An RNA of 207 nucleotides, treated with 2A3 and DMS and read out base by base. For 2A3, 4,414 sequencing reads were counted.

RNA sequence: GGGAACGACUCGAGUAGAGUCGAAAAACUACAAACUAGAACAAAUAAAUGCCACGUGAAAUCCUACACGACAGCUAAGUUGCGGAGUACUGGUGAUAUAUGUGGUCCAUUGGGCGUGAGAUGAGAAUCGGACGGCUUUGAGGCAAUGUCGUGAAGAAGCUAUCCUAAAUUUCGAUUUAGGAUAGCUAAAAGAAACAACAACAACAAC
Reactivity to 2A3 in 0.01 (KOAc 150mM, MgCl2 10mM, bicine 150mM(pH8.5), 24C), signal-to-noise 6, nucleotides 027 to 156: a000c080u190a050c080a050a100a030c050u120a060g050a120a030c060a050a120a080u170a070a090a030u110g030c010c010a040c030g010u050g040a030a060a050u060c020c020u050a040c020a010c030g130a060c040a010g010c040u110a110a030g040u060u040g050c030g030g010a050g030u040a050c020u030g020g040u040g060a000u020a010u010a010u120g070u040g010g020u030c010c020a050u050u110g020g030g000c020g030u050g020a060g020a040u100g030a030g040a090a050u090c050g020g020a010c000g020g000c020u090u060u100g060a050g010g010c020a040a030u080g010u040c030g020u030g020a020a020g030a020
Reactivity to DMS in 0.01 (KOAc 150mM, MgCl2 10mM, bicine 150mM(pH8.5), 24C), signal-to-noise 4, nucleotides 027 to 156: a080c050u000a140c040a060a100a150c080u010a090g010a080a160c080a070a070a100u000a070a100a100u000g010c020c010a060c040g030u000g010a080a100a100u010c030c020u000a090c020a050c010g020a060c050a060g030c070u000a070a170g010u000u000g030c030g010g020a120g020u000a030c010u010g000g030u000g010a080u000a110u000a040u000g010u000g020g010u000c020c030a120u000u010g020g000g040c050g000u000g020a120g010a080u010g010a130g010a040a090u000c050g010g020a050c040g010g010c020u000u000u000g000a110g010g030c020a030a100u000g030u010c010g030u010g010a070a100g010a120